[RMDB]
RNA sequence: GGGAACGACUCGAGUAGAGUCGAAAACAGCUCCCGGUGGCUGGAUGCAGGUGGCCAAGCAGAAUAUGCCGGUGUCCAGCAUUGUGAUCGGCGUGGAUCUCUUUCCCAUCCGUCCCAUUGCCGGCUGGUGAGCCGAGCUGUUCGCAGCUCGGCUCACAAAAGAAACAACAACAACAAC
Reactivity to 2A3 in 0.01 (KOAc 150mM, MgCl2 10mM, bicine 150mM(pH8.5), 24C), signal-to-noise 2, nucleotides 027 to 126: c050a000g020c000u080c000c010c010g010g060u020g090g050c030u020g000g060a010u020g010c030a000g000g100u030g090g060c000c010a050a000g120c110a000g120a230a050u300a100u280g000c060c000g000g010u000g020u040c040c010a030g010c010a010u030u200g000u030g000a050u050c060g000g030c050g010u030g000g010a200u030c000u010c000u130u030u000c000c010c010a000u010c010c020g060u010c030c020c000a040u030u190g040c010c010g040g040c030u010g050
Structure probing data (2A3) for a 177-nucleotide construct.
2A3 adducts were read by reverse transcription with SuperScript II with manganese.
Conditions: 150 mM KOAc, 10 mM MgCl2 and 150 mM bicine (pH 8.5), 24 C.
For 2A3, 689 sequencing reads were counted.
The data come from the RNA Mapping Database (RMDB), library OK1LIB.